[RMDB]
RNA sequence: GGGAACGACUCGAGUAGAGUCGAAAACUUAGUGAGUUCGCUCACUAAGGGACUCUGGAACCCAGGCUGGAGAGGGACCAAGAAGGAGGCUGGGCACCACCAACAUUCAGCGCUUCGGCGCUGAAAAUUUAUGUAAGCAUUUCGAUGCUUACAUAAAAAAAGAAACAACAACAACAAC
Reactivity to DMS in 0.01 (KOAc 150mM, MgCl2 10mM, bicine 150mM(pH8.5), 24C), signal-to-noise 3, nucleotides 027 to 126: c000u000u000a010g010u010g010a010g010u000u020c170g030c000u000c000a010c000u000a010a010g000g020g000a070c090u000c020u000g000g000a120a150c040c020c020a060g000g000c040u010g000g010a080g000a100g010g000g000a100c070c040a070a110g010a090a110g010g020a060g010g010c030u010g010g000g010c050a060c050c040a100c070c050a080a060c130a150u000u010c000a000g030c010g040c000u000u010c180g030g000c000g010c010u010g010a000a000a030a090
Reactivity to 2A3 in 0.01 (KOAc 150mM, MgCl2 10mM, bicine 150mM(pH8.5), 24C), signal-to-noise 2, nucleotides 027 to 126: c000u010u000a000g010u000g020a000g010u040u120c170g080c110u010c000a000c000u000a010a000g010g000g020a010c010u020c060u090g080g020a050a050c000c020c000a000g070g040c040u050g040g030a050g030a040g080g010g020a030c030c040a050a040g070a040a040g080g040a020g040g000c020u020g010g030g000c020a030c010c010a010c000c010a030a090c010a020u020u050c020a010g010c000g020c030u050u100c230g100g000c000g000c020u000g000a010a000a000a000

Background: Chemical mapping of a 177-nucleotide RNA with DMS and 2A3. Values cover nucleotides 27 to 126. 2A3 adducts were read by reverse transcription with SuperScript II with manganese. For 2A3, 2,843 sequencing reads were counted. Conditions: 150 mM KOAc, 10 mM MgCl2 and 150 mM bicine (pH 8.5), 24 C.